Structure probing data (2A3 and DMS) for a 177-nucleotide construct. 2A3 adducts were read by reverse transcription with SuperScript II with manganese.
[RMDB]
RNA sequence: GGGAACGACUCGAGUAGAGUCGAAAAUGGUGCCCGUUCGCGGGCACCACCUCCUGGUUAGGGCCACGUUAAAUAGUUGCUUAAGCCCUAAGCGUUGAUAAAGAUGCGCGAAAUUCGUUUCGCGCAAACUUUCUACACUAUUCGUAGUGUAGAAAGUAAAAGAAACAACAACAACAAC
Reactivity to 2A3 in 0.01 (KOAc 150mM, MgCl2 10mM, bicine 150mM(pH8.5), 24C), signal-to-noise 2, nucleotides 027 to 126: u060g030g000u000g000c020c030c010g010u040u020c180g010c000g060g020g080c000a000c000c000a000c000c020u020c020c000u110g020g030u000u010a000g000g000g000c000c030a040c050g030u020u050a090a220a180u230a300g070u110u110g000c000u030u080a030a020g020c020c000c030u000a010a020g020c010g150u130u170g100a140u140a150a100a070g150a120u140g000c000g000c010g000a000a010a030u070u070c120g080u030u010u020c000g000c000g000c030a000a000
Reactivity to DMS in 0.01 (KOAc 150mM, MgCl2 10mM, bicine 150mM(pH8.5), 24C), signal-to-noise 6, nucleotides 027 to 126: u000g010g020u000g020c000c010c010g020u000u000c170g020c020g040g020g010c010a010c010c000a000c050c090u000c010c010u000g010g010u000u000a020g010g010g020c000c040a300c300g000u000u000a030a100a160u000a070g010u000u010g010c040u000u000a110a230g000c000c000c010u010a000a010g000c070g010u000u010g010a120u000a060a060a090g000a160u010g000c000g000c000g010a000a010a040u000u010c110g000u010u000u000c000g000c000g010c000a000a010
It was measured as part of the RMDB library M2PK50.